[RMDB]
RNA sequence: GGGAACGACUCGAGUAGAGUCGAAAAGAAUGAGUCGGGUCACACCGCCGACGACGAUGAACAGCUGAAUGGCUAGCGUCGAUGAGAGGCCGGCGGCCAGCAGCUUGCCGAAGCUAUCGCGGGUGGCAUGGCAUGGAGCAUUCGUGCUCCAUGCCAUAAAAGAAACAACAACAACAAC
Reactivity to DMS in 0.01 (KOAc 150mM, MgCl2 10mM, bicine 150mM(pH8.5), 24C), signal-to-noise 2, nucleotides 027 to 126: g070a130a000u030g000a070g010u000c010g030g000g000u070c070a040c040a120c040c030g020c010c020g000a090c010g030a070c080g000a100u030g000a170a180c120a030g020c020u050g000a080a060u060g000g000c020u000a040g030c040g000u000c030g000a110u000g010a170g000a190g000g010c060c020g010g010c050g000g000c010c080a020g000c110a050g020c000u000u000g070c050c030g030a290a140g040c070u030a040u010c060g010c040g000g060g010u000g000g000c090
Reactivity to 2A3 in 0.01 (KOAc 150mM, MgCl2 10mM, bicine 150mM(pH8.5), 24C), signal-to-noise 3, nucleotides 027 to 126: g100a000a140u210g000a030g070u040c030g030g000g000u090c000a000c030a070c130c010g070c010c010g020a020c000g000a010c010g080a080u110g100a100a020c020a020g000c000u120g090a110a130u190g120g020c020u010a060g030c000g010u000c020g060a110u220g050a070g040a090g070g040c010c000g000g020c020g000g000c000c000a020g000c010a000g000c040u020u290g000c020c010g050a050a000g010c000u040a030u200c000g000c020g010g000g040u010g000g010c010